[RMDB]
RNA sequence: GGGAACGACUCGAGUAGAGUCGAAAAGAUAUGGAACGUUGUGAGAGCGAAGAACUGGGUCGGAAACGACCCAGGGAGCUCCACACGUUCCUAAGUCAAAAGAGAUCAUCGGUUCGCCGAUGAUCUCCGCCGAUUAAAAGUUCGCUUUUAAUCGGCGAAAAGAAACAACAACAACAAC
Reactivity to 2A3 in 0.01 (KOAc 150mM, MgCl2 10mM, bicine 150mM(pH8.5), 24C), signal-to-noise 2, nucleotides 027 to 126: g020a010u090a070u180g000g000a000a000c050g010u180u140g020u260g040a300g000a000g140c000g270a300a040g010a070a000c000u000g000g010g010u020c020g000g010a080a100a060c010g000a000c010c000c000a000g000g010g000a010g000c040u000c030c000a000c020a000c010g000u010u010c000c000u010a010a010g030u000c020a050a110a070a080g000a000g000a010u000c000a000u010c000g000g120u050u100c300g050c110c000g000a000u000g000a000u000c000u040c000
Reactivity to DMS in 0.01 (KOAc 150mM, MgCl2 10mM, bicine 150mM(pH8.5), 24C), signal-to-noise 2, nucleotides 027 to 126: g000a020u000a300u010g000g010a020a000c000g010u010u000g020u000g000a160g030a040g020c010g000a140a300g010a170a230c000u000g000g000g020u000c000g000g000a170a120a160c010g000a040c020c000c000a010g000g000g020a040g000c050u000c010c000a000c000a000c000g000u020u010c000c000u000a000a070g000u000c030a050a070a140a170g000a020g020a010u000c000a000u000c000g010g010u010u010c300g040c000c000g000a010u000g030a000u010c000u000c000